[RMDB]
RNA sequence: GGGAACGACUCGAGUAGAGUCGAAAAGUCCGGCUAUGUCCGUGCAAGUGCGGAUUUAGCUGUAACUUUCGAGGGGCAGCACUCUUGUGCAGAUAAAUGGGAUACUAUUAAGUUUAUGAGAAUUUCAAUAUUAUAUAUGUUCCCGUCUAUCACAAGAUCUUUGUUGUACCUUCGGGUACAACAAAGAAAAAGAAACAACAACAACAAC
Reactivity to 2A3 in 0.01 (KOAc 150mM, MgCl2 10mM, bicine 150mM(pH8.5), 24C), signal-to-noise 2, nucleotides 027 to 156: g040u050c040c000g010g010c000u000a010u050g020u000c000c010g020u030g010c140a260a120g070u150g140c000g000g000a000u010u000u020a000g010c000u010g050u030a040a070c000u020u130u210c100g050a030g000g010g010g040c010a010g030c020a040c010u040c010u000u060g010u050g020c050a020g020a060u040a020a100a050u070g000g000g010a020u040a170c000u000a050u030u070a100a060g000u010u070u180a140u200g020a080g080a180a200u130u210u200c000a020a010u020a110u130u110a130u050a040u040a050u300g000u000u010c000c000c000g010u000c020u010a080u130c000a010c000a050a020g020a110

About this RNA: Chemical mapping of a 207-nucleotide RNA with 2A3. The reactions ran in a buffer of 150 mM KOAc, 10 mM MgCl2 and 150 mM bicine (pH 8.5), at 24 C. The 2A3 profile rests on 570 reads.